[RMDB]
RNA sequence: GGGAACGACUCGAGUAGAGUCGAAAACAUAGCUUAAAACUCAAAGGACUUGGCGGUACUUUAUAUCCAUCUAGAGGAGCCUGUUCUAUAAUCGAUAAACCCCGCUCUACCUCACCAUCUCUUGCUAAUUCAGCCUAUAUACCGCCAUCUUCAGCAAGAUUACAUAGGUCUUCGGACCUAUGUAAUCAAAAGAAACAACAACAACAAC
Reactivity to 2A3 in 0.01 (KOAc 150mM, MgCl2 10mM, bicine 150mM(pH8.5), 24C), signal-to-noise 5, nucleotides 027 to 156: c040a040u140a030g030c010u130u170a060a050a070a100c080u130c120a110a120a070g020g010a040c080u060u060g020g000c000g020g000u020a020c020u070u160u110a140u030a030u100c040c020a050u040c070u090a030g010a060g070g010a010g010c020c010u060g040u080u010c040u050a090u090a130a130u110c040g030a010u100a080a150a090c020c010c010c010g020c010u030c020u030a050c010c030u040c030a020c000c040a100u010c040u000c000u090u050g020c010u050a040a070u110u060c020a000g030c020c000u040a050u010a010u020a120c000c000g000c030c000a020u020c030u070u040c000a020g020c030a080a050
Reactivity to DMS in 0.01 (KOAc 150mM, MgCl2 10mM, bicine 150mM(pH8.5), 24C), signal-to-noise 1, nucleotides 027 to 156: c120a190u020a100g030c000u000u000a050a030a100a230c060u000c060a090a090a170g010g010a060c020u000u000g030g040c000g010g030u010a050c060u010u010u020a070u010a100u000c070c040a110u000c070u020a060g020a130g020g010a130g020c060c030u010g010u000u000c050u010a130u010a080a080u000c090g020a060u030a050a140a110c030c000c010c000g000c050u010c030u010a000c020c020u000c060a020c060c020a070u000c020u000c020u000u010g010c030u000a050a150u010u000c040a090g000c030c030u000a140u010a050u010a040c000c030g020c010c010a050u000c020u000u000c050a080g030c050a080a190
An RNA of 207 nucleotides, treated with 2A3 and DMS and read out base by base.
In probing experiments dimethyl sulfate is read out at A N1 and C N3, which are open when not base-paired.
Values cover nucleotides 27 to 156.
Conditions: 150 mM KOAc, 10 mM MgCl2 and 150 mM bicine (pH 8.5), 24 C.